[RMDB]
RNA sequence: GGGAACGACUCGAGUAGAGUCGAAAAGGCGGUGCGUCAUCCCGGGGCUGCAAUGGUUUCGACGGGGCAUGAGGAGGGUGACUGAAGCCUGCUCGGUCAGAGCGAACCCGUAACAGCGAACAACAUCAGUCAGAUAGAGCUUCGGCUCUAUCUGACUAAAAGAAACAACAACAACAAC
Reactivity to 2A3 in 0.01 (KOAc 150mM, MgCl2 10mM, bicine 150mM(pH8.5), 24C), signal-to-noise 2, nucleotides 027 to 126: g000g000c040g140g020u110g010c030g030u000c000a140u060c030c000c000g020g000g000g020c060u030g000c040a100a180u130g070g000u110u100u050c070g020a030c130g000g000g000g130c050a070u090g000a000g010g040a000g000g040g010u000g020a150c090u100g000a010a000g060c040c040u010g030c000u000c010g050g070u170c080a040g010a010g070c000g010a020a050c000c000c000g010u080a030a010c020a000g030c030g030a000a000c020a020a020c000a040u160c020
Reactivity to DMS in 0.01 (KOAc 150mM, MgCl2 10mM, bicine 150mM(pH8.5), 24C), signal-to-noise 1, nucleotides 027 to 126: g020g000c100g040g010u000g040c030g050u000c020a080u000c050c020c050g000g000g000g000c010u010g030c210a070a110u000g000g000u020u000u100c030g000a040c030g050g010g050g000c050a040u070g000a150g000g000a180g000g060g030u000g000a200c170u020g020a170a210g000c020c000u020g000c000u000c030g070g050u000c090a070g000a100g010c000g000a030a060c010c000c040g000u000a010a160c070a060g000c000g000a080a040c130a050a050c210a010u020c110
This 177-nucleotide RNA was probed chemically with 2A3 and DMS. Values cover nucleotides 27 to 126. Source: RMDB library RFM100, as collected in RNAgym. For DMS, 1,396 sequencing reads were counted. For DMS the reverse transcriptase was MarathonRT. Conditions: 150 mM KOAc, 10 mM MgCl2 and 150 mM bicine (pH 8.5), 24 C. 2A3 adducts were read by reverse transcription with SuperScript II with manganese.